[RMDB]
RNA sequence: GGGAACGACUCGAGUAGAGUCGAAAAACCUUUGUGAUAAUCGAAGAACGAGAGGCAAGCACGAUUCUUCCCAUUGGGAAGGGUGUGAUGACCCUCUCGGGAGAUUAUCACUCUGGUAAAACUGUUGUCACGUUAGUUCGCUAACGUGACAACAGAAGGGUAAAGCUCUGUUCGCAGAGCUUUACCCAAAAGAAACAACAACAACAAC
Reactivity to 2A3 in 0.01 (KOAc 150mM, MgCl2 10mM, bicine 150mM(pH8.5), 24C), signal-to-noise 2, nucleotides 027 to 156: a010c000c000u020u030u000g010u010g010a000u000a000a000u000c030g100a300a030g020a060a050c000g000a000g000a010g030g000c060a050a270g010c010a060c040g240a040u000u040c000u000u000c030c000c050a300u190u300g020g000g000a000a010g000g000g010u060g020u020g000a110u040g060a070c030c010c000u010c010u000c000g000g000g010a020g010a000u000u000a000u000c000a000c000u020c010u000g000g010u050a100a020a000a030c010u000g010u010u000g020u000c020a010c010g000u000u000a000g020u020u020c230g000c210u010a010a000c010g000u010g000a000c000a010a000c000a000g000a000a010